[RMDB]
RNA sequence: GGGAACGACUCGAGUAGAGUCGAAAACGAUCAGUACGUUCGCGUACUGAUCGAAGCUACUGGAGACAGUAGCAAGUCUAAGACCUUGUUAUGAGGAAACAAGGAAAAAUGGAGGAAGGUCGGACCUCCAUACUUAGACAACCUCAAACCGACCAAAAAUAGCACUAGCCUUCGGGCUAGUGCUAUUAAAAGAAACAACAACAACAAC
Reactivity to 2A3 in 0.01 (KOAc 150mM, MgCl2 10mM, bicine 150mM(pH8.5), 24C), signal-to-noise 1, nucleotides 027 to 156: c000g000a000u000c000a000g010u010a000c010g010u000u060c250g010c000g100u020a000c000u000g010a000u010c000g000a000a010g000c000u000a000c000u000g000g000a070g060a000c000a010g000u000a000g010c020a030a000g000u000c000u000a000a110g010a170c000c000u010u000g010u060u030a200u230g250a110g120g100a050a000a000c000a010a010g000g010a040a210a000a000a000u030g010g000a000g060g000a120a230g020g000u000c010g010g140a300c000c000u000c000c000a000u000a000c000u000u000a000g000a020c020a030a100c020c010u080c050a000a000a000c010c020g000a030c010c030a000a030a000
Structure probing data (2A3) for a 207-nucleotide construct. Conditions: 150 mM KOAc, 10 mM MgCl2 and 150 mM bicine (pH 8.5), 24 C.